This 177-nucleotide RNA was probed chemically with DMS and 2A3. DMS adducts were read by reverse transcription with MarathonRT. It was measured as part of the RMDB library TTRDEL. The RNA was probed in 150 mM KOAc, 10 mM MgCl2 and 150 mM bicine (pH 8.5) at 24 C.

RNA sequence: GGGAACGACUCGAGUAGAGUCGAAAAGAUAUGGAGAUGAACUACUCGACAACAAGCGAUGAAAUCGGAAACGAUGGAGCUUGCUAAUCGAGCAUCUCCUAAGUCAAAAGGUUGCUUCGGCAACCAAGUAUGGGAAUUAGUUCGCUAAUUCCCAUACAAAAGAAACAACAACAACAAC
Reactivity to DMS in 0.01 (KOAc 150mM, MgCl2 10mM, bicine 150mM(pH8.5), 24C), signal-to-noise 5, nucleotides 027 to 126: g000a040u010a300u010g000g010a000g000a020u000g010a070a080c090u020a300c010u000c000g010a000c070a120a130c010a010a010g010c010g000a070u010g000a070a120a030u000c000g010g000a100a100a160c010g020a010u000g010g000a050g000c000u000u000g010c020u000a150a290u000c000g000a020g000c000a010u000c000u000c000c000u000a020a070g000u010c030a100a100a120a110g000g000u000u000g000c000u000u010c200g020g000c000a000a000c000c020a020a040
Reactivity to 2A3 in 0.01 (KOAc 150mM, MgCl2 10mM, bicine 150mM(pH8.5), 24C), signal-to-noise 5, nucleotides 027 to 126: g040a000u050a040u130g000g000a010g000a010u020g010a040a010c030u150a080c000u300c010g020a000c010a090a010c000a020a010g000c010g200a300u060g040a110a050a020u030c010g020g010a070a030a040c000g000a000u030g010g000a020g010c000u010u000g000c040u120a100a110u030c000g000a000g010c010a000u000c000u020c000c000u010a050a020g050u020c020a050a020a020a200g010g000u000u000g010c000u050u130c300g150g000c010a000a010c000c000a000a010